[RMDB]
RNA sequence: GGGAACGACUCGAGUAGAGUCGAAAAUAAAAGCUGAGCACCGUCACAGAGCAAAGGUCAGAGCCUGGCAGAAUUGGUGUGGGUGUUUUGGUGUCUGUCUGUAACCUGCCUGGAGAGCCAGGUUUUGAUGCCAAGAUGAGUUCGCUCAUCUUGGCAUAAAAGAAACAACAACAACAAC
Reactivity to DMS in 0.01 (KOAc 150mM, MgCl2 10mM, bicine 150mM(pH8.5), 24C), signal-to-noise 2, nucleotides 027 to 126: u000a060a080a170a130g020c070u020g010a120g010c070a050c070c030g000u000c070a030c070a090g000a130g020c070a100a100a090g000g000u030c030a080g000a100g010c050c020u020g000g000c000a110g010a170a160u010u010g000g030u000g000u000g000g000g030u000g010u000u000u000u000g020g010u000g000u010c070u010g020u020c030u010g010u000a130a060c020c030u000g010c040c020u010g020g020a200g000a180g000c060c010a030g010g000u000u000u000u000g000